[RMDB]
RNA sequence: GGGAACGACUCGAGUAGAGUCGAAAACUGUCGUUCUUCGGAACGACAGAAAGAACGCGUGGGUCACGCAAGGAGGAGCGUGUCGGACGCGACAAACCCAAAAAAGCGUUCGGUUCGCCGAACGCAAGGGUUAUAGGAUGUUCGCAUCCUAUAACCCAAAAGAAACAACAACAACAAC
Reactivity to 2A3 in 0.01 (KOAc 150mM, MgCl2 10mM, bicine 150mM(pH8.5), 24C), signal-to-noise 2, nucleotides 027 to 126: c000u000g000u000c000g010u010u020c010u040u050c180g110g010a010a000c000g000a000c000a000g010a000a010a000g030a070a010c010g010c000g020u080g160g180g030u050c000a010c020g000c030a040a040g160g070a070g040g050a110g020c010g000u000g000u010c030g100g070a010c000g020c010g010a000c020a020a060a050c000c000c000a100a100a010a000a000a010g000c000g000u000u010c010g000g000u040u050c210g000c040c000g000a000a000c000g010c000a010a020
Reactivity to DMS in 0.01 (KOAc 150mM, MgCl2 10mM, bicine 150mM(pH8.5), 24C), signal-to-noise 2, nucleotides 027 to 126: c000u000g010u000c000g040u010u000c010u000u000c270g030g010a000a010c000g010a000c000a010g000a030a060a080g010a130a090c020g000c000g030u000g000g000g000u000c000a000c000g010c010a030a080g000g030a300g020g010a170g010c010g020u000g020u010c050g020g000a030c020g010c000g000a020c090a050a080a070c000c000c000a000a030a040a080a130a120g000c000g020u010u000c000g000g020u000u010c200g030c010c010g000a000a010c000g000c000a020a020